[RMDB]
RNA sequence: GGGAACGACUCGAGUAGAGUCGAAAAUGACCCAGGCAAAGCUUUCUGGAUCACUCUUUCUGUAUUAGUGGUCACUUGCCCCUGUGCACUUUCUCUGGCCACACCUACAGCCUUGACCACAGCCACCCGUAACGUUUUCAUUCGUGAAAACGUUACGAAAAGAAACAACAACAACAAC
Reactivity to DMS in 0.01 (KOAc 150mM, MgCl2 10mM, bicine 150mM(pH8.5), 24C), signal-to-noise 2, nucleotides 027 to 126: u010g000a160c000c000c010a070g010g020c090a060a110a110g030c130u000u000u000c040u010g010g010a040u000c000a030c090u000c070u000u000u000c150u010g000u000a030u000u000a070g030u010g020g000u000c040a150c140u010u000g010c040c030c060c110u020g020u000g000c040a090c170u000u010u000c050u010c090u010g000g010c010c010a040c080a070c100c040u010a050c060a120g010c050c060u000u020g000a070c030c030a060c070a080g020c030c060a090c090c090
Reactivity to 2A3 in 0.01 (KOAc 150mM, MgCl2 10mM, bicine 150mM(pH8.5), 24C), signal-to-noise 2, nucleotides 027 to 126: u080g090a020c020c020c010a040g030g040c040a040a070a150g010c070u140u100u100c080u130g080g040a050u030c000a010c030u050c030u040u190u030c050u150g150u060a120u110u060a100g010u010g010g010u000c010a030c080u030u110g020c000c000c000c010u060g040u080g060c010a030c100u120u150u070c110u050c050u040g050g050c040c010a030c010a010c040c000u070a020c010a000g030c010c010u020u070g050a030c030c000a010c020a020g050c010c020a040c000c010